[RMDB]
RNA sequence: GGGAACGACUCGAGUAGAGUCGAAAAUUGGUUCGUGUCACAGUUUAUGGCUCGGGGUUAACUGGUUCAACUUAAUCCUUAAAUUAUGAACUUAUCGUUUACUUGUUUGUCUUAUGAUCUAAAGUAAGCGAGACAUUAAAACAUAAGACUAAACUGUUCAUAGUGGAAAGUUCGCUUUCCACUAUGAAAAAGAAACAACAACAACAAC
Reactivity to 2A3 in 0.01 (KOAc 150mM, MgCl2 10mM, bicine 150mM(pH8.5), 24C), signal-to-noise 5, nucleotides 027 to 156: u090u060g070g010u080u080c060g020u050g030u070c020a010c040a160g050u100u120u110a110u140g020g000c020u010c020g020g000g010g020u030u020a030a020c020u110g110g030u080u050c030a020a020c010u030u050a010a020u040c000c000u050u060a040a050a090u230u150a120u210g010a030a000c000u150u190a100u060c010g010u000u000u010a010c010u030u040g020u100u060u060g010u020c010u000u040a040u060g060a100u040c060u170a050a000a000g000u010a020a000g020c000g010a020g010a010c020a020u140u220a050a150a000a000c010a010u040a020a000g000a000c020u020a030a090a070c030u070g030u040
Reactivity to DMS in 0.01 (KOAc 150mM, MgCl2 10mM, bicine 150mM(pH8.5), 24C), signal-to-noise 1, nucleotides 027 to 156: u000u000g030g020u000u000c060g020u000g010u010c080a080c030a090g020u000u000u000a120u020g010g000c020u010c080g010g000g000g010u020u000a040a060c060u000g010g030u010u020c070a100a120c120u010u000a020a080u000c010c020u000u010a100a080a120u000u000a070u010g000a030a050c030u000u020a120u000c020g020u000u010u000a030c030u000u000g000u000u020u000g010u000c020u000u000a080u000g020a070u000c070u000a040a060a060g020u000a040a040g030c010g010a080g000a120c070a080u000u000a030a050a070a200c030a030u010a010a050g010a040c010u000a040a040a050c010u010g040u000